[RMDB]
RNA sequence: GGGAACGACUCGAGUAGAGUCGAAAAGAUAUGGACGAUCGAAGGGAGAACUGAUUCGGAAACGAAUUCUAAGUUCGACGAUCUUCCGAUCGUCCUAAGUCAAAACCGGACCGUUCGCGGUCCGGAAGCUAAUACUUUACUUCGGUAAAGUAUUAGCAAAAGAAACAACAACAACAAC
Reactivity to DMS in 0.01 (KOAc 150mM, MgCl2 10mM, bicine 150mM(pH8.5), 24C), signal-to-noise 4, nucleotides 027 to 126: g000a040u000a300u010g000g000a010c000g030a010u000c000g000a020a010g010g000g010a040g000a010a010c010u000g000a050u000u000c000g000g000a100a080a150c000g000a020a010u000u000c300u010a130a040g010u000u000c000g010a130c280g000a050u000c000u000u000c080c070g020a000u000c000g020u000c000c000u000a000a050g000u010c030a080a070a160a210c010c010g000g000a010c000c000g020u000u010c260g010c010g000g040u000c000c000g010g000a010a040
Reactivity to 2A3 in 0.01 (KOAc 150mM, MgCl2 10mM, bicine 150mM(pH8.5), 24C), signal-to-noise 3, nucleotides 027 to 126: g020a000u070a040u150g000g000a000c000g000a010u010c000g010a010a000g030g010g010a060g000a000a000c020u020g000a010u000u000c020g010g050a060a060a040c010g010a010a010u220u120c090u250a200a070g010u020u000c010g060a100c030g010a030u020c000u010u000c110c030g000a000u000c000g020u000c010c000u000a040a000g010u020c020a020a020a080a150c000c000g000g010a000c030c000g010u080u100c300g010c010g210g000u000c010c000g000g000a000a000